[RMDB]
RNA sequence: GGGAACGACUCGAGUAGAGUCGAAAAAACCAAAACUUCUAGUCAGGAUGUUUUCCAUUCCACAAGGGAUACAUGAAUCAACGAAAGUGUCUGUUAAAGUUUUGGGAGAUUAAUACUGCUCGCGUUCUCCGUCUUUAUCUUUCGAGAUAAAGACGGAAAAAGAAACAACAACAACAAC
Reactivity to 2A3 in 0.01 (KOAc 150mM, MgCl2 10mM, bicine 150mM(pH8.5), 24C), signal-to-noise 9, nucleotides 027 to 126: a000a000c010c000a010a000a000a000c020u030u020c080u110a040g150u100c020a020g020g060a060u020g030u010u020u030u010c020c020a050u160u070c050c010a130c070a220a130g060g010g000a010u040a070c030a030u110g160a140a110u180c070a090a060c070g070a080a040a050g060u040g030u010c000u010g020u030u080a020a010a000g000u000u000u000u000g020g080g000a090g010a030u070u090a060a070u070a160c000u000g000c000u000c000g020c000g000u010u000c010
Reactivity to DMS in 0.01 (KOAc 150mM, MgCl2 10mM, bicine 150mM(pH8.5), 24C), signal-to-noise 4, nucleotides 027 to 126: a090a030c020c000a000a000a000a000c010u000u020c220u000a070g010u020c040a050g010g000a030u010g000u010u000u000u000c020c100a070u010u000c100c110a110c290a120a110g010g020g020a030u010a040c070a050u010g010a130a110u040c190a080a070c110g020a050a040a070g010u010g020u000c000u000g010u000u000a040a000a040g010u000u000u000u000g000g000g000a070g010a060u020u010a040a130u010a140c020u000g020c010u000c000g010c010g000u000u000c010

Conditions: 150 mM KOAc, 10 mM MgCl2 and 150 mM bicine (pH 8.5), 24 C.
Chemical mapping of a 177-nucleotide RNA with 2A3 and DMS.
For 2A3 the reverse transcriptase was SuperScript II with manganese.